[RMDB]
RNA sequence: GGGAACGACUCGAGUAGAGUCGAAAAGUUUGACUGUUCGCAGUCAAACAAAGGCUAAGGUAUAAAAAUCUGCUAGUUACCAAAGCCAAAAACGAGCAGAAAAAACGGCGUACUUCGGUACGCCGAACGUUAUAUUAAUCUUCGGAUUAAUAUAACGAAAAGAAACAACAACAACAAC
Reactivity to 2A3 in 0.01 (KOAc 150mM, MgCl2 10mM, bicine 150mM(pH8.5), 24C), signal-to-noise 4, nucleotides 027 to 126: g000u010u000u000g000a000c000u010g030u060u090c230g000c080a000g010u000c000a000a000a000c010a040a040a000g010g000c010u020a040a030g020g050u060a090u070a140a300a080a050a170u030c000u000g010c010u010a020g110u060u010a000c000c010a040a050a020g020c020c030a210a050a000a000a000c060g020a010g000c000a010g070a040a110a000a000a010a010c020g000g000c000g010u010a000c000u020u070c200g090g000u010a000c010g000c000c000g000a000a000
Reactivity to DMS in 0.01 (KOAc 150mM, MgCl2 10mM, bicine 150mM(pH8.5), 24C), signal-to-noise 3, nucleotides 027 to 126: g000u010u000u000g010a020c000u010g020u010u020c140g050c000a020g010u010c000a000a000a010c000a050a080a140g000g010c010u020a030a300g000g000u000a030u010a030a070a070a080a110u000c010u000g000c010u000a220g020u010u000a050c000c000a020a240a070g020c000c010a010a090a040a050a080c190g000a040g000c010a020g030a000a040a070a080a050a180c010g010g010c000g000u000a000c010u010u000c120g020g020u000a010c000g020c000c000g000a010a020
Overview
The data come from the RNA Mapping Database (RMDB), library M2PK50. The record gives the reactivity of an RNA of 177 nucleotides to 2A3 and DMS. For 2A3 the reverse transcriptase was SuperScript II with manganese. Reactivities are rounded to 0.1 and cut off at 0 and 3. The RNA was probed in 150 mM KOAc, 10 mM MgCl2 and 150 mM bicine (pH 8.5) at 24 C.